[RMDB]
RNA sequence: GGGAACGACUCGAGUAGAGUCGAAAACGGGGUAAUGACCUGGGGUAUAGUAAAAACGCGCCAGAUGACACAAUGGACAAUCCGCAGCCAAGUCCUAAGGUGCAGGAGACUUCUCUCCUGCACUAUGGAUGCAGUUCAACGACUAGACGGUGAUGGGGUUAUUGGUGAAGUUCGCUUCACCAAUAACAAAAGAAACAACAACAACAAC
Reactivity to 2A3 in 0.01 (KOAc 150mM, MgCl2 10mM, bicine 150mM(pH8.5), 24C), signal-to-noise 3, nucleotides 027 to 156: c030g000g000g000g040u040a060a080u090g050a050c000c000u020g020g000g010g050u070a120u070a130g140u120a110a100a030a040a040c090g030c030g000c040c020a010g030a070u070g030a030c020a000c040a160a140u090g000g000a010c020a030a050u050c040c010g040c010a010g010c020c010a020a000g040u010c000c000u050a100a100g000g000u000g000c000a000g000g000a010g020a050c170u280u000c080u090c000u000c110c000u010g000c000a000c000u000a000u000g000g010a000u030g000c040a010g010u030u080c060a110a040c040g030a020c020u050a030g010a020c050g040g000u050g010a050u080g000g020g010
Reactivity to DMS in 0.01 (KOAc 150mM, MgCl2 10mM, bicine 150mM(pH8.5), 24C), signal-to-noise 2, nucleotides 027 to 156: c030g060g050g070g040u020a040a120u020g020a030c040c010u010g010g020g000g070u000a060u000a110g010u000a100a060a050a130a100c070g000c080g030c000c020a080g020a100u000g030a070c010a050c080a090a160u000g000g000a040c020a080a050u000c040c030g050c040a090g000c000c020a100a240g010u000c000c010u000a080a090g010g020u000g040c000a030g020g000a050g000a070c160u000u000c130u010c000u000c000c000u010g010c000a000c000u000a120u000g000g000a050u010g000c200a010g000u000u000c130a060a120c060g000a080c030u000a090g000a180c060g000g000u000g000a100u000g020g020g010
This 207-nucleotide RNA was probed chemically with 2A3 and DMS. The DMS profile rests on 2,637 reads. It was measured as part of the RMDB library ARCHII. The reactions ran in a buffer of 150 mM KOAc, 10 mM MgCl2 and 150 mM bicine (pH 8.5), at 24 C. The 2A3 profile rests on 2,279 reads. Values are in units of 0.01, from 0 to 300, in steps of 10.